The record gives the reactivity of an RNA of 177 nucleotides to DMS.
RNA sequence: GGGAACGACUCGAGUAGAGUCGAAAAAAAGAUAUGGAAGUGCGACAUGGGAUAUUCGCGUUUGACGUCCUAUCGGAAACGAUAGGACCGAGCGAAAUAUCCCAACAGCGCACUUCCUAAGUCAAAAGGCUAUUUAAAACUUCGGUUUUAAAUAGCCAAAAGAAACAACAACAACAAC
Reactivity to DMS in 0.01 (KOAc 150mM, MgCl2 10mM, bicine 150mM(pH8.5), 24C), signal-to-noise 1, nucleotides 027 to 126: a050a080a050g000a020u000a300u000g000g030a010a010g030u000g010c000g000a030c100a220u010g000g040g020a000u000a030u000u000c000g020c000g000u000u020u000g000a170c300g020u020c000c000u010a000u020c000g000g000a120a130a120c000g030a010u000a000g010g010a010c000c040g020a070g050c000g000a040a030a030u000a020u000c000c040c020a020a010c270a160g000c040g020c020a000c010u000u000c000c000u000a010a080g000u000c020a040a080a170a130
The data come from the RNA Mapping Database (RMDB), library TTRDES. DMS adducts were read by reverse transcription with MarathonRT.